[RMDB]
Record summary
Source: RMDB library OK1LIB, as collected in RNAgym. The record gives the reactivity of an RNA of 177 nucleotides to 2A3 and DMS. The 2A3 profile rests on 2,235 reads. Reactivities are given for positions 27 through 126. For DMS, 2,397 sequencing reads were counted. Conditions: 150 mM KOAc, 10 mM MgCl2 and 150 mM bicine (pH 8.5), 24 C.
RNA sequence: GGGAACGACUCGAGUAGAGUCGAAAAGAAUAUAAGAGCGUAUUCGCGUCUUGACGUGAAUGAGCCUAGACUGUAGGUUCUAGUGGGAUAGUAACGCUCACUCACAAAACGCUAUUCCACAUGAAGACCUAUCCGUCCGAUUCGUCGGACGGAUAGGAAAAGAAACAACAACAACAAC
Reactivity to 2A3 in 0.01 (KOAc 150mM, MgCl2 10mM, bicine 150mM(pH8.5), 24C), signal-to-noise 3, nucleotides 027 to 126: g040a050a060u170a000u060a180a030g030a000g000c010g030u020a020u040u000c000g000c000g000u020c130u240u260g100a040c000g000u020g010a020a050u080g000a000g010c010c010u060a110g180a300c140u180g090u110a000g000g030u050u000c020u010a060g000u000g000g000g000a020u000a030g020u060a030a000c000g000c010u030c000a040c000u030c000a060c030a020a120a000a000c100g000c010u010a000u010u000c000c010a020c020a020u140g060a060a020g070a030
Reactivity to DMS in 0.01 (KOAc 150mM, MgCl2 10mM, bicine 150mM(pH8.5), 24C), signal-to-noise 2, nucleotides 027 to 126: g000a180a140u060a110u080a040a080g000a010g000c020g010u030a110u010u000c010g020c030g000u000c040u060u030g020a000c030g040u010g000a010a000u000g000a070g010c020c000u010a000g020a120c300u060g000u000a000g000g000u000u000c000u000a030g020u000g010g000g000a000u000a030g000u000a050a040c000g020c000u000c000a110c060u000c120a100c110a020a000a050a110c150g000c000u000a010u000u000c000c000a000c020a090u100g000a170a040g000a210